Structure probing data (DMS and 2A3) for a 207-nucleotide construct.
For DMS the reverse transcriptase was MarathonRT.
Reactivities are given for positions 27 through 156.
The reactions ran in a buffer of 150 mM KOAc, 10 mM MgCl2 and 150 mM bicine (pH 8.5), at 24 C.
For 2A3 the reverse transcriptase was SuperScript II with manganese.
RNA sequence: GGGAACGACUCGAGUAGAGUCGAAAACAGCCCAAGCUUGCUGCACGUCUAGGGCGCAGUAGUCCAGGGUUUCCUUGAUGAUGUCAUACUUAUCCUGUCCCUUUUUUUUCCACAGCUCGCGGUUGAGGACAAACUCUUCGCGGUCUUUCCAGUGGGGCUAUAAUCCAUACUUCGGUAUGGAUUAUAGAAAAGAAACAACAACAACAAC
Reactivity to DMS in 0.01 (KOAc 150mM, MgCl2 10mM, bicine 150mM(pH8.5), 24C), signal-to-noise 1, nucleotides 027 to 156: c040a250g020c000c000c010a090a130g010c060u010u010g010c020u000g030c010a050c080g000u000c090u010a170g010g040g040c020g030c020a080g000u000a090g030u000c030c040a210g000g030g000u000u000u010c010c030u000u000g020a080u010g030a070u000g010u000c030a130u000a070c050u000u000a080u000c020c020u010g000u010c010c010c020u000u000u000u000u000u000u000u000c030c000a080c050a120g000c040u000c020g040c020g030g020u000u010g020a080g020g020a110c130a110a070a100c060u000c020u010u000c040g000c030g030g000u010c020u000u000u000c020c030a170g060u000g000g010g000g010
Reactivity to 2A3 in 0.01 (KOAc 150mM, MgCl2 10mM, bicine 150mM(pH8.5), 24C), signal-to-noise 4, nucleotides 027 to 156: c040a030g010c000c000c000a010a030g050c030u060u180g010c010u010g000c030a020c060g050u040c080u180a100g040g060g030c050g000c020a010g010u090a020g010u010c050c070a040g000g030g000u020u050u060c000c000u080u080g030a070u040g010a020u050g120u090c030a030u060a250c040u120u070a050u110c010c030u040g080u070c030c000c040u050u020u020u020u030u010u080u070c030c020a050c010a010g010c010u020c030g030c020g090g070u070u060g010a010g020g030a080c060a070a210a130c020u010c000u010u030c010g010c000g020g000u000c020u070u090u050c040c010a020g000u060g030g000g010g000